[RMDB]
RNA sequence: GGGAACGACUCGAGUAGAGUCGAAAACAUUACGAAUUCAGUCGCAAAUUGUAGAAUUAGCUAGUCUACGAUUUAGUGAGCGUUAGUAACGUUGUAAUAUAAUAUAGUCUUUGGAAGGAUUAUAUUGGAGCCGCGGACAAGUUCGCUUGUCCGCGAACGCCUUAAAAUUGUUCGCAAUUUUAAGGCGAAAAGAAACAACAACAACAAC
Reactivity to 2A3 in 0.01 (KOAc 150mM, MgCl2 10mM, bicine 150mM(pH8.5), 24C), signal-to-noise 3, nucleotides 027 to 156: c020a050u090u120a020c070g080a130a110u200u180c070a110g060u010c030g000c010a010a000a000u000u000g000u000a000g020a110a060u160u030a110g130c140u070a040g080u000c000u000a010c000g000a000u010u000u090a070g010u040g060a050g090c010g030u030u110a020g030u060a110a050c060g000u000u020g030u050a170a090u100a120u020a140a000u000a000u020a000g000u000c040u050u100u140g160g050a100a060g030g000a000u000u000a000u030a000u030u030g030g040a110g150c130c000g000c020g000g010a000c000a000a000g020u020u150c110g030c240u000u000g030u000c000c020g000c000g000a000a000
Chemical mapping of a 207-nucleotide RNA with 2A3. For 2A3, 1,082 sequencing reads were counted. Source: RMDB library M2RFPK, as collected in RNAgym. High 2A3 reactivity points to a flexible backbone, as in loops and unpaired stretches. The RNA was probed in 150 mM KOAc, 10 mM MgCl2 and 150 mM bicine (pH 8.5) at 24 C.